[RMDB]
RNA sequence: GGGAACGACUCGAGUAGAGUCGAAAAGAGCCGACAGAGAAGUCGGGAAGCGACGAGAGAGAAUAGAAUACAUUGGAAUUCGAGAUACUGCCACAAAAUGACAGACGUCGCCAUAUUCUCGGAGAAGCAUAUAUCGUGGGUUCGCCCACGAUAUAUGAAAAGAAACAACAACAACAAC
Reactivity to 2A3 in 0.01 (KOAc 150mM, MgCl2 10mM, bicine 150mM(pH8.5), 24C), signal-to-noise 9, nucleotides 027 to 126: g050a020g100c000c000g000a000c020a030g260a010g080a280a020g020u000c010g010g000g020a030a020g030c010g030a020c040g000a010g010a000g010a000g040a210a030u100a090g070a110a020u130a140c090a160u120u220g060g100a080a040u040u030c010g000a000g000a060u060a100c020u020g010c000c010a060c050a050a130a050a100u140g040a020c010a030g050a040c010g000u030c010g000c010c000a050u080a070u100u030c020u010c010g070g020a120g020a070a020g030
Reactivity to DMS in 0.01 (KOAc 150mM, MgCl2 10mM, bicine 150mM(pH8.5), 24C), signal-to-noise 8, nucleotides 027 to 126: g010a170g010c000c010g010a010c010a100g010a200g010a090a080g010u000c000g020g010g010a100a100g010c020g000a050c020g010a180g010a140g010a200g010a070a070u020a070g000a060a030u010a110c110a210u030u040g010g010a090a040u000u000c000g000a090g000a090u010a110c030u000g020c010c000a050c110a070a070a070a200u000g010a050c020a020g000a240c030g000u010c010g010c020c100a050u020a080u000u000c020u000c010g010g000a110g000a110a110g020